Chemical mapping of a 177-nucleotide RNA with 2A3 and DMS. 2A3 adducts were read by reverse transcription with SuperScript II with manganese. Reactivities are given for positions 27 through 126. Source: RMDB library OK1LIB, as collected in RNAgym. The reactions ran in a buffer of 150 mM KOAc, 10 mM MgCl2 and 150 mM bicine (pH 8.5), at 24 C. The DMS profile rests on 5,148 reads. For DMS the reverse transcriptase was MarathonRT.

[RMDB]
RNA sequence: GGGAACGACUCGAGUAGAGUCGAAAAGAUUUGGCCGGUGGCAGCUGGAACCCAUCCUCGACGAAUUCGCGUGUCAGCAUGUCGAAUUCACGCACAAUGGAUGCAUCCGAGCCGCCCGGGGACAGGCCGUCAUGUGUGGAUUCGUCCACACAUGACGAAAAGAAACAACAACAACAAC
Reactivity to 2A3 in 0.01 (KOAc 150mM, MgCl2 10mM, bicine 150mM(pH8.5), 24C), signal-to-noise 6, nucleotides 027 to 126: g060a050u110u100u190g060g030c030c010g050g040u120g050g000c000a030g020c030u120g050g000a130a160c040c010c000a000u010c000c010u050c030g160a180c070g000a050a000u000u010c000g000c040g020u000g060u080c090a110g170c020a200u040g160u250c000g000a000a010u000u010c010a000c050g090c010a100c040a130a080u090g000g020a010u000g000c030a090u000c010c010g020a010g000c000c000g000c010c000c010g040g000g020g040a040c030a090g000g070c010
Reactivity to DMS in 0.01 (KOAc 150mM, MgCl2 10mM, bicine 150mM(pH8.5), 24C), signal-to-noise 4, nucleotides 027 to 126: g010a150u030u030u010g000g000c000c010g010g010u040g000g010c010a070g060c030u010g000g020a080a060c210c300c020a000u000c010c010u000c110g010a150c130g010a020a000u000u000c010g010c040g030u010g000u000c290a150g040c000a000u010g000u030c010g000a020a020u000u010c000a180c140g030c290a070c190a150a070u010g010g000a030u020g000c270a290u000c010c000g020a150g020c000c040g000c030c000c060g000g000g010g020a100c080a070g000g040c040